Conditions: 150 mM KOAc, 10 mM MgCl2 and 150 mM bicine (pH 8.5), 24 C. The record gives the reactivity of an RNA of 177 nucleotides to 2A3 and DMS. High DMS reactivity at an A or C suggests that its Watson-Crick edge is free. The 2A3 profile rests on 615 reads. 2A3 adducts were read by reverse transcription with SuperScript II with manganese. For DMS, 1,011 sequencing reads were counted.
[RMDB]
RNA sequence: GGGAACGACUCGAGUAGAGUCGAAAAUCCUGGCUGGCUUGCCUGAGCGCGCCGCAGCGCUUAAAAAUGCUCGCGGAACUGAUGCAGUGGGAGGCGACCGAUUGAAGCCAAUUGCAGACAUCAUGUGCUGCAAUGGGCCUUUCGAGGCCCAUUGCAGAAAAGAAACAACAACAACAAC
Reactivity to 2A3 in 0.01 (KOAc 150mM, MgCl2 10mM, bicine 150mM(pH8.5), 24C), signal-to-noise 1, nucleotides 027 to 126: u000c000c000u000g000g040c020u050g010g080c000u050u200g080c010c000u010g000a000g050c040g010c000g000c000c060g000c050a000g000c000g000c000u010u020a000a000a000a000a100u100g010c000u000c000g000c020g000g030a010a060c060u070g060a100u100g030c110a070g000u050g000g060g000a030g060g010c000g050a040c050c000g160a100u000u100g140a120a020g030c000c000a000a010u080u020g000c000a000g090a050c000a110u160c030a100u050g190u200g090
Reactivity to DMS in 0.01 (KOAc 150mM, MgCl2 10mM, bicine 150mM(pH8.5), 24C), signal-to-noise 1, nucleotides 027 to 126: u000c010c000u000g000g000c060u000g000g000c120u000u000g040c000c010u000g000a110g000c030g000c170g000c020c000g040c000a010g030c030g000c000u030u020a010a050a080a240a120u000g000c000u000c070g030c000g000g000a140a030c270u010g000a080u000g000c090a010g000u000g030g030g030a140g000g000c000g000a070c110c020g000a030u020u000g040a150a260g010c000c030a190a000u030u030g000c050a030g000a240c150a140u000c090a090u100g000u020g000